Structure probing data (2A3 and DMS) for a 177-nucleotide construct. Reactivities are rounded to 0.1 and cut off at 0 and 3. 2A3 adducts were read by reverse transcription with SuperScript II with manganese. For DMS, 24,822 sequencing reads were counted. The data come from the RNA Mapping Database (RMDB), library OK2TST.
RNA sequence: GGGAACGACUCGAGUAGAGUCGAAAAGCUUCCGCUCCACCAGAUCGGGGAUCACCGCAUGCCUGAAGGUCUCCCAGUGACCCUGGUUGCGGAAGAAGCGGGUGAGAUUGGUGGUCACCACAUCCAGUCACAUAAUGAAGUUCGCUUCAUUAUGUGAAAAAGAAACAACAACAACAAC
Reactivity to 2A3 in 0.01 (KOAc 150mM, MgCl2 10mM, bicine 150mM(pH8.5), 24C), signal-to-noise 9, nucleotides 027 to 126: g020c010u030u010c010c010g010c030u060c060c040a050c000c010a020g020a120u090c040g000g000g010g020a050u040c030a020c040c030g060c090a080u180g090c010c050u110g100a160a060g030g010u010c020u050c040c020c010a060g060u070g070a030c050c010c010u010g020g000u020u050g010c030g020g010a010a010g000a000a000g070c100g020g000g010u040g010a090g010a120u080u120g040g020u050g020g060u090c030a020c040c000a020c010a020u050c020c010a030g100
Reactivity to DMS in 0.01 (KOAc 150mM, MgCl2 10mM, bicine 150mM(pH8.5), 24C), signal-to-noise 9, nucleotides 027 to 126: g000c020u000u000c000c010g010c010u000c100c110a100c040c040a110g000a140u000c040g020g000g000g010a120u000c050a060c030c080g010c140a110u010g010c050c040u000g010a120a140g010g010u000c090u000c050c060c050a110g000u010g000a060c070c040c020u000g010g000u000u000g000c020g010g000a030a030g010a070a050g010c080g000g000g020u000g000a070g000a130u000u010g010g020u000g000g010u000c040a090c030c030a070c090a070u010c040c050a160g010